[RMDB]
Structure probing data (DMS and 2A3) for a 177-nucleotide construct. For DMS the reverse transcriptase was MarathonRT. The RNA was probed in 150 mM KOAc, 10 mM MgCl2 and 150 mM bicine (pH 8.5) at 24 C.
RNA sequence: GGGAACGACUCGAGUAGAGUCGAAAAGAUAUGGAGCGAGAGGCUUUUGACGCUCAACCACUCGGAAACGAGUGCAAGAGCGAUAAGCCUCCGCUCCUAAGUCAAAACAGGCUGUUCGCAGCCUGAAGACAUAUUAUCUGUUCGCAGAUAAUAUGUCAAAAGAAACAACAACAACAAC
Reactivity to DMS in 0.01 (KOAc 150mM, MgCl2 10mM, bicine 150mM(pH8.5), 24C), signal-to-noise 9, nucleotides 027 to 126: g010a040u000a300u010g000g000a010g010c000g010a160g020a010g030g010c000u000u000u000u000g030a240c110g020c010u000c000a100a300c300c000a000c010u000c000g020g000a070a100a210c000g010a020g010u000g000c040a050a300g000a010g010c000g010a060u000a000a010g000c000c000u000c000c000g000c000u000c000c000u000a000a050g010u000c030a110a060a110a210c010a010g000g020c000u000g010u000u020c240g030c000a010g010c000c000u000g000a070a090
Reactivity to 2A3 in 0.01 (KOAc 150mM, MgCl2 10mM, bicine 150mM(pH8.5), 24C), signal-to-noise 9, nucleotides 027 to 126: g020a000u040a020u130g020g000a010g000c020g010a300g010a010g300g000c050u090u090u130u280g250a140c180g000c000u000c000a010a040c030c000a000c000u000c000g010g010a030a040a040c010g000a000g010u000g000c010a090a090g000a000g000c040g030a040u040a050a000g000c000c000u000c000c000g000c000u000c000c000u000a000a000g000u000c010a000a010a060a100c010a010g000g000c000u020g070u120u160c300g010c170a000g000c000c000u000g000a030a010